An RNA of 177 nucleotides, treated with DMS and 2A3 and read out base by base. It was measured as part of the RMDB library OK2TST. Conditions: 150 mM KOAc, 10 mM MgCl2 and 150 mM bicine (pH 8.5), 24 C. For DMS the reverse transcriptase was MarathonRT. Values cover nucleotides 27 to 126.

RNA sequence: GGGAACGACUCGAGUAGAGUCGAAAAGGUGGCGACGGUGGUUGAGGCAACCUCGCAGCCAAUGCCACGGCGGGAUCCCCUGCGCAAGUACAUGGACAUCAUCUAUCGAGAGGCAGAGGAAGGCUCAGCAUCUGGGGUAAUUCGUUACCCCAGAUGCAAAAGAAACAACAACAACAAC
Reactivity to DMS in 0.01 (KOAc 150mM, MgCl2 10mM, bicine 150mM(pH8.5), 24C), signal-to-noise 3, nucleotides 027 to 126: g020g060u010g010g000c010g030a050c280g020g030u010g000g030u010u000g000a210g020g000c150a120a030c080c040u000c050g020c060a210g010c000c000a050a260u000g000c010c000a020c030g010g010c020g000g000g020a100u000c010c020c010c020u000g010c020g010c090a080a110g000u000a060c220a040u030g000g010a060c130a150u000c100a070u000c050u000a050u010c050g000a120g000a110g020g000c060a070g000a050g000g000a070a080g000g020c040u000c050a130
Reactivity to 2A3 in 0.01 (KOAc 150mM, MgCl2 10mM, bicine 150mM(pH8.5), 24C), signal-to-noise 1, nucleotides 027 to 126: g030g010u020g020g000c030g030a050c100g110g000u030g040g000u050u140g030a030g030g080c060a080a220c030c020u000c010g000c050a010g050c000c000a020a010u080g000c000c000a000c000g030g020c040g020g060g010a090u100c010c040c000c060u060g020c040g020c070a040a040g080u060a050c050a120u050g030g040a030c020a040u100c000a000u030c070u100a070u140c090g000a050g000a020g130g050c030a000g000a030g050g000a040a060g070g000c030u000c100a010